An RNA of 207 nucleotides, treated with 2A3 and DMS and read out base by base. DMS adducts were read by reverse transcription with MarathonRT. Conditions: 150 mM KOAc, 10 mM MgCl2 and 150 mM bicine (pH 8.5), 24 C. Source: RMDB library M2RFOK, as collected in RNAgym. For 2A3, 785 sequencing reads were counted.
RNA sequence: GGGAACGACUCGAGUAGAGUCGAAAAACUGCAUCUACGGAUGCAGAACUACGUUCAUCCAAUUUAUUUGGACGCAUGAAAUGAGAAUAGGGAACGGGAUUCUCGUACGCAGGCUACGGCCUGCGAAAAAACUCCUUAUGCUUCGGCAUAAGGAGAAGAAGACAGAAAUCUUCGGAUUUCUGUCUUCAAAAGAAACAACAACAACAAC
Reactivity to 2A3 in 0.01 (KOAc 150mM, MgCl2 10mM, bicine 150mM(pH8.5), 24C), signal-to-noise 1, nucleotides 027 to 156: a000c000u000g010c000a000u000c000u050a050c290g140g000a000u010g010c000a000g000a010a000c050u060a000c000g010u000u000c010a010u000c000c000a010a010u080u270u160a220u010u010u300g000g000a000c000g020c060a060u140g090a100a180a000u050g000a020g000a010a000u040a050g000g070g000a000a000c000g000g010g000a000u030u000c000u010c010g010u040a030c050g010c000a000g000g000c000u010a030c210g080g040c000c000u030g000c010g000a000a000a000a000a000a010c000u000c000c010u000u000a000u030g000c020u050u060c110g040g000c020a000u000a000a000g000g000a000g000a000a010
Reactivity to DMS in 0.01 (KOAc 150mM, MgCl2 10mM, bicine 150mM(pH8.5), 24C), signal-to-noise 1, nucleotides 027 to 156: a100c020u000g060c000a010u010c010u000a170c270g050g050a020u030g020c010a020g000a100a100c010u000a000c010g000u000u000c020a040u000c100c290a040a160u000u000u000a280u030u000u000g000g010a020c010g010c030a070u010g020a060a150a120u000g000a280g000a110a070u000a040g030g000g020a030a100c060g000g000g030a300u000u020c010u000c000g010u040a040c000g100c000a010g010g070c000u000a080c280g100g040c000c000u000g090c000g050a000a020a070a050a090a050c060u000c010c000u000u030a010u000g000c000u000u020c300g050g050c000a000u000a030a000g030g040a000g000a080a040